[RMDB]
RNA sequence: GGGAACGACUCGAGUAGAGUCGAAAAAGUGAAGCAAAAAGAAGGUAGGGUUAUUGGAAGCGUUGAUGUCAUUUGUUGAUGAGUAUGAUACCAACAGAGGCACUGCCGCCCAGGCUCCAACUCCGGGUCUUUCCAAGGGGCGUGAGGACCAGCCUAACGUUAUGGUAUCUUUCGAGAUACCAUAACGAAAAGAAACAACAACAACAAC
Reactivity to 2A3 in 0.01 (KOAc 150mM, MgCl2 10mM, bicine 150mM(pH8.5), 24C), signal-to-noise 3, nucleotides 027 to 156: a010g190u130g060a050a010g040c060a060a060a060a060a070g070a080a000g030g030u100a050g030g010g020u100u140a110u160u200g050g030a090a000g030c020g010u040u060g050a190u030g040u030c110a230u000u060u000g030u010u040g040a090u080g010a060g050u120a150u230g110a090u080a140c020c010a030a010c030a030g020a040g000g000c020a000c060u050g010c020c000g000c010c000c010a000g010g000c010u000c030c020a080a060c010u050c090c040g000g020g000u000c020u000u050u040c020c010a030a030g020g000g000g000c040g010u060g030a050g010g020a030c020c020a020g000c010c020u050a070a020
Reactivity to DMS in 0.01 (KOAc 150mM, MgCl2 10mM, bicine 150mM(pH8.5), 24C), signal-to-noise 2, nucleotides 027 to 156: a070g010u010g010a070a120g000c050a060a040a070a070a070g000a080a080g010g010u010a090g010g020g020u000u000a070u010u000g010g010a130a140g020c070g010u000u010g000a020u000g030u000c010a070u000u010u000g010u010u000g050a100u000g010a180g040u000a000u000g000a160u010a050c040c000a020a050c060a050g000a090g010g000c030a060c080u000g000c110c020g000c020c030c030a150g030g030c010u000c030c030a020a090c010u010c020c030g040g010g010u000c030u000u000u000c070c030a100a120g070g010g010g030c050g000u020g020a120g010g000a060c030c020a110g000c020c010u010a050a240